Structure probing data (DMS and 2A3) for a 177-nucleotide construct. For 2A3 the reverse transcriptase was SuperScript II with manganese. High DMS reactivity at an A or C suggests that its Watson-Crick edge is free.
[RMDB]
RNA sequence: GGGAACGACUCGAGUAGAGUCGAAAAUGCUGGUCCGUCCUCAAUGAAGCUCCAGGUCUGGCCGCAACCUGUUUCCCAGAUGCCGCUGCUUUCGGUCCAUUUGCACGACGGGGAUGCCGAACUGGUCUACAUUACUUUGCUUCGGCAAAGUAAUGUAAAAAGAAACAACAACAACAAC
Reactivity to DMS in 0.01 (KOAc 150mM, MgCl2 10mM, bicine 150mM(pH8.5), 24C), signal-to-noise 4, nucleotides 027 to 126: u000g010c040u000g040g010u000c040c060g000u010c020c010u000c090a090a120u010g010a110a070g010c070u000c090c070a050g010g020u000c030u000g010g010c020c070g000c040a080a080c060c030u010g020u000u000u000c020c010c020a130g010a090u010g020c030c040g000c060u000g000c050u000u000u000c040g000g000u000c050c060a090u000u010u010g020c040a090c100g020a090c080g000g000g000g000a120u000g000c020c030g010a060a080c120u000g000g010u000c090
Reactivity to 2A3 in 0.01 (KOAc 150mM, MgCl2 10mM, bicine 150mM(pH8.5), 24C), signal-to-noise 3, nucleotides 027 to 126: u100g000c070u130g000g040u030c020c010g000u010c000c000u060c070a110a210u200g090a090a050g040c020u040c040c020a000g030g000u030c020u050g010g020c040c000g040c020a020a030c000c010u020g090u000u050u020c010c010c000a020g010a070u110g040c020c030g030c040u040g000c020u050u110u070c030g000g040u010c030c000a090u070u080u140g060c060a040c100g090a020c020g030g000g000g030a060u090g050c030c020g020a050a030c050u080g040g010u020c020